The record gives the reactivity of an RNA of 207 nucleotides to DMS and 2A3. 2A3 adducts were read by reverse transcription with SuperScript II with manganese. The data come from the RNA Mapping Database (RMDB), library VIROID. Reactivities are given for positions 27 through 156. Conditions: 150 mM KOAc, 10 mM MgCl2 and 150 mM bicine (pH 8.5), 24 C. For DMS, 3,583 sequencing reads were counted.
RNA sequence: GGGAACGACUCGAGUAGAGUCGAAAACACUGCUCGAGAAUGUCUUCUCUUCCCCCGCGAUUCUUCCUCGAUUCGGAUCGGCUCAUCUCGACAAGAGGCGGCGGUCCUCAGUGCUCUUACUCUUUUCUGUAAAGAGGAAACUGCUGGACUCGCCGCCGUAUGGCUUAAUCUUCGGAUUAAGCCAUACAAAAGAAACAACAACAACAAC
Reactivity to DMS in 0.01 (KOAc 150mM, MgCl2 10mM, bicine 150mM(pH8.5), 24C), signal-to-noise 2, nucleotides 027 to 156: c070a140c020u000g020c020u010c000g010a040g010a130a150u000g000u000c060u000u000c000u000c030u000u000c000c010c010c040c000g020c060g040a120u000u000c030u010u000c080c010u000c070g000a120u000u000c040g000g000a130u000c040g000g020c040u000c070a250u010c020u000c030g000a160c060a040a160g010a170g040g040c000g060g050c050g050g050u000c000c020u000c020a040g050u000g020c070u010c060u010u000a190c010u000c010u000u000u020u010c230u030g030u000a060a040a070g020a040g010g000a120a070a040c000u010g020c100u000g000g010a030c010u000c020g040c000c000g020c000c020
Reactivity to 2A3 in 0.01 (KOAc 150mM, MgCl2 10mM, bicine 150mM(pH8.5), 24C), signal-to-noise 3, nucleotides 027 to 156: c050a020c010u010g020c000u000c010g020a030g100a190a250u200g050u090c070u080u040c030u050c000u030u050c020c010c000c030c000g010c010g030a040u060u040c020u060u060c010c020u070c050g060a110u120u040c030g030g020a040u050c000g030g000c000u020c030a160u030c040u010c070g030a060c050a120a060g030a040g120g000c000g010g000c000g000g000u000c000c010u000c000a010g000u030g080c020u010c000u120u080a110c010u060c050u080u180u280u060c080u100g160u190a040a110a000g010a010g020g000a020a110a070c000u000g040c030u010g010g000a000c010u030c240g000c000c000g000c000c000